Chemical mapping of a 177-nucleotide RNA with DMS and 2A3. For 2A3 the reverse transcriptase was SuperScript II with manganese. For DMS the reverse transcriptase was MarathonRT. Reactivities are rounded to 0.1 and cut off at 0 and 3.
[RMDB]
RNA sequence: GGGAACGACUCGAGUAGAGUCGAAAAUUCUGUCCUGGCAACGGGAGAAUCACGUAUGAACUUUACCCAAGAUGCACCCGCAAUUGUUAUCAGCCUGACCUCGCCAACACCCGAGGCGGUCUGGCACGCUUCAUGGACAAUUCGUUGUCCAUGAAGCAAAAGAAACAACAACAACAAC
Reactivity to DMS in 0.01 (KOAc 150mM, MgCl2 10mM, bicine 150mM(pH8.5), 24C), signal-to-noise 2, nucleotides 027 to 126: u000u000c050u010g010u000c000c000u010g000g000c260a040a110c100g020g000g000a140g020a090a030u010c130a100c180g000u020a060u020g040a060a050c070u000u000u000a110c010c010c040a050a080g000a140u000g010c040a080c010c030c030g040c180a110a100u000u010g050u040u000a090u020c090a110g000c010c000u000g010a080c080c040u030c090g030c010c030a090a040c130a140c030c070c040g020a090g000g020c000g000g000u000c000u000g000g010c050a060c220
Reactivity to 2A3 in 0.01 (KOAc 150mM, MgCl2 10mM, bicine 150mM(pH8.5), 24C), signal-to-noise 2, nucleotides 027 to 126: u050u000c020u060g150u050c000c010u000g000g000c000a000a090c010g000g040g030a030g070a010a040u080c050a050c170g080u120a100u180g040a140a030c070u060u060u150a090c000c040c030a030a020g060a010u110g010c030a010c000c010c020g040c090a000a000u100u010g070u170u090a130u170c070a030g010c020c000u020g050a080c040c000u030c080g020c000c010a060a050c020a100c050c000c000g000a020g020g040c030g000g000u010c000u030g000g030c040a010c050